[RMDB]
RNA sequence: GGGAACGACUCGAGUAGAGUCGAAAAGAUAUGGAAAGAACUUUUGACGCCAAACUAUCGGAAACGAUAGCGAAUGGCGAUAAGUUCUUCCUAAGUCAAAACUACUGCGACUUCGGUCGCAGUAGAAGUUGUUUACAGCGUUCGCGCUGUAAACAACAAAAGAAACAACAACAACAAC
Reactivity to DMS in 0.01 (KOAc 150mM, MgCl2 10mM, bicine 150mM(pH8.5), 24C), signal-to-noise 1, nucleotides 027 to 126: g030a050u000a130u000g010g000a060a030a100g000a020a000c000u000u000u010u000g020a300c020g060c000c020a010a300a220c000u000a000u000c000g010g000a100a100a100c010g030a010u000a000g030c020g030a150a140u000g040g040c000g000a020u000a000a000g000u000u000c000u000u000c000c020u000a060a210g010u000c030a090a090a140a180c020u000a020c000u000g000c000g020a000c000u000u010c200g020g000u000c000g000c000a000g000u000a020g000a010a070
Reactivity to 2A3 in 0.01 (KOAc 150mM, MgCl2 10mM, bicine 150mM(pH8.5), 24C), signal-to-noise 1, nucleotides 027 to 126: g000a020u070a010u070g030g020a070a210a010g000a060a060c050u060u130u180u290g300a140c090g010c010c010a030a060a050c020u020a000u020c000g010g030a040a020a010c030g010a020u000a010g010c050g260a300a300u110g000g000c000g000a000u020a010a000g010u030u000c000u010u000c000c000u000a080a030g020u000c000a000a000a110a170c000u000a000c000u020g010c010g000a020c010u020u090c300g210g000u000c000g000c010a000g000u000a010g010a000a010